[RMDB]
RNA sequence: GGGAACGACUCGAGUAGAGUCGAAAAACAAAGAGCAACACGCGCAGUCACGCAGGCAGAUGGAAUAAUCUGCCAAGAAUAACUUAUGGACGGUAGACUGCGCGAACCACCGACCAAUAGAAAAAAACUUAUAUUCCAACUUCGGUUGGAAUAUAAGAAAAGAAACAACAACAACAAC
Reactivity to DMS in 0.01 (KOAc 150mM, MgCl2 10mM, bicine 150mM(pH8.5), 24C), signal-to-noise 1, nucleotides 027 to 126: a120c060a040a110a030g050a090g000c010a050a040c090a130c000g000c000g000c020a050g010u000c020a140c060g000c110a110g000g000c030a000g020a010u000g000g020a160a080u000a190a070u000c000u010g020c010c020a090a050g010a150a090u010a170a050c100u010u000a140u000g020g000a050c030g040g000u000a070g010a000c000u000g000c020g010c010g000a030a020c050c120a080c010c020g000a050c060c020a040a140u010a090g000a040a000a170a070a020a050a120
Reactivity to 2A3 in 0.01 (KOAc 150mM, MgCl2 10mM, bicine 150mM(pH8.5), 24C), signal-to-noise 1, nucleotides 027 to 126: a000c040a010a090a000g130a030g050c010a020a040c000a000c030g050c000g030c010a000g000u010c010a010c040g040c050a060g020g040c010a000g010a010u060g070g080a220a090u210a120a100u100c000u000g000c000c000a010a000g000a000a020u220a050a020c020u090u060a070u140g010g060a030c010g020g050u030a040g020a000c020u020g000c020g000c010g000a000a010c000c010a020c000c040g000a010c010c010a060a160u130a140g110a050a120a010a000a000a000a000
Annotation:
This 177-nucleotide RNA was probed chemically with DMS and 2A3. It was measured as part of the RMDB library M2PK90. The 2A3 profile rests on 995 reads. Values cover nucleotides 27 to 126.